[RMDB]
RNA sequence: GGGAACGACUCGAGUAGAGUCGAAAAGCCUAACAGUUCGCUGUUAGGCAAAUGCACAGACUUCGCAACUGUGAAAAACUCAACAGAAGUGUCUAUGCGAGGAUCGUUGCGUCUUCGGACGCAACAAGAUACGGAAACACUUCGGUGUUUCCGUAUCAAAAGAAACAACAACAACAAC
Reactivity to DMS in 0.01 (KOAc 150mM, MgCl2 10mM, bicine 150mM(pH8.5), 24C), signal-to-noise 2, nucleotides 027 to 126: g000c000c000u000a000a010c000a010g000u000u000c200g020c000u000g000u000u020a000g020g040c000a010a010a010u010g020c040a020c020a020g010a100c060u000u000c090g010c080a070a190c020u000g000u010g010a050a050a130a140a070c050u000c060a110a090c140a060g010a060a070g000u000g000u010c030u000a050u010g000c000g000a080g010g000a170u000c110g000u000u010g000c010g010u000c000u000u020c170g000g020a000c000g010c000a000a000c000a060a040
Reactivity to 2A3 in 0.01 (KOAc 150mM, MgCl2 10mM, bicine 150mM(pH8.5), 24C), signal-to-noise 3, nucleotides 027 to 126: g000c000c010u000a000a000c000a010g060u110u130c190g050c120u000g000u000u000a000g000g000c000a020a030a020u100g000c000a010c000a010g030a040c010u040u050c050g000c040a070a080c050u000g000u020g060a090a000a010a030a030c050u060c060a040a090c040a190g140a220a040g170u050g060u120c030u090a060u040g020c020g020a020g050g020a100u120c100g000u000u000g010c000g000u000c000u020u030c160g090g000a000c000g000c000a000a000c000a000a000